An RNA of 177 nucleotides, treated with 2A3 and DMS and read out base by base.
[RMDB]
RNA sequence: GGGAACGACUCGAGUAGAGUCGAAAAGAGCGAAUCGAACGCGGGCAUGCGCGUCGGCUUCACGCAAAAGCGCAGAUUGCCCGUCUUCAGCAUCUUCUCGUAGGUCGCGCGCAAUGCAUCGCUCGCAGUCGAUUAAAUUAUUCGUAAUUUAAUCGACAAAAGAAACAACAACAACAAC
Reactivity to 2A3 in 0.01 (KOAc 150mM, MgCl2 10mM, bicine 150mM(pH8.5), 24C), signal-to-noise 9, nucleotides 027 to 126: g060a000g000c010g020a030a090u160c080g020a060a020c070g000c010g010g020g000c010a010u020g000c000g000c000g050u130c030g030g000c020u140u150c130a030c080g030c030a060a060a060a070g010c030g000c010a010g030a170u080u150g040c010c000c000g010u000c000u020u020c000a010g000c000a050u030c040u100u020c040u020c030g040u060a040g030g070u060c030g000c000g000c010g000c030a050a120u080g000c010a070u060c010g010c010u010c020g010c020a020
Reactivity to DMS in 0.01 (KOAc 150mM, MgCl2 10mM, bicine 150mM(pH8.5), 24C), signal-to-noise 9, nucleotides 027 to 126: g010a070g010c020g010a060a090u010c120g010a070a070c210g010c020g000g010g020c010a040u000g010c100g010c010g010u010c220g020g000c020u000u000c170a080c120g010c170a040a040a140a220g010c210g010c080a050g000a070u000u010g010c020c030c030g010u000c050u000u000c060a110g010c020a060u010c060u000u000c090u000c040g010u000a050g010g010u000c030g000c020g000c030g000c070a060a040u000g000c020a160u000c020g010c010u000c010g010c130a140
For 2A3 the reverse transcriptase was SuperScript II with manganese.
The 2A3 profile rests on 42,676 reads.
DMS (dimethyl sulfate) methylates the pairing face of unpaired adenines and cytosines.
As a SHAPE reagent, 2A3 marks flexible, mostly unpaired nucleotides at the ribose 2'-OH.
Source: RMDB library OK2TST, as collected in RNAgym.